[RMDB]
An RNA of 177 nucleotides, treated with DMS and 2A3 and read out base by base. For 2A3, 4,028 sequencing reads were counted. For DMS the reverse transcriptase was MarathonRT. Reactivities are given for positions 27 through 126. It was measured as part of the RMDB library TTRINS. The reactions ran in a buffer of 150 mM KOAc, 10 mM MgCl2 and 150 mM bicine (pH 8.5), at 24 C.

RNA sequence: GGGAACGACUCGAGUAGAGUCGAAAAGAUAUGGAUACACUCUCCAUCGAUCGUACAACAUUUAGAGUAACAUUCGGAAACGAAUGUUACUCUACCAUUGUACGGGAGGAGAGGUGUAUCCUAAGUCCAGUUCUAGAAACUUCGGUUUCUAGAACUGAAAAGAAACAACAACAACAAC
Reactivity to DMS in 0.01 (KOAc 150mM, MgCl2 10mM, bicine 150mM(pH8.5), 24C), signal-to-noise 3, nucleotides 027 to 126: g010a030u020a170u010g000g000a010u000a000c000a040c000u000c000u000c000c000a300u010c260g010a060u030c000g010u000a000c000a010a000c170a300u010u010u010a000g010a020g000u000a000a000c000a020u000u000c000g010g010a060a040a120c010g000a010a000u000g000u000u000a000c000u010c000u000a000c300c300a180u010u000g000u010a000c000g000g000g010a030g040g000a010g010a020g030g000u000g010u000a000u000c000c000u000a000a080g010u000c010
Reactivity to 2A3 in 0.01 (KOAc 150mM, MgCl2 10mM, bicine 150mM(pH8.5), 24C), signal-to-noise 2, nucleotides 027 to 126: g020a020u070a040u100g030g000a020u020a000c010a020c000u000c000u010c010c030a280u300c070g020a050u060c000g020u030a010c000a060a010c050a150u300u300u300a020g010a010g000u000a020a000c010a000u010u000c020g020g020a030a050a040c020g000a000a010u000g000u000u000a000c000u030c000u000a000c000c000a030u010u010g010u010a000c000g000g000g010a030g020g000a020g000a050g020g040u030g000u010a000u000c000c010u020a040a000g010u030c030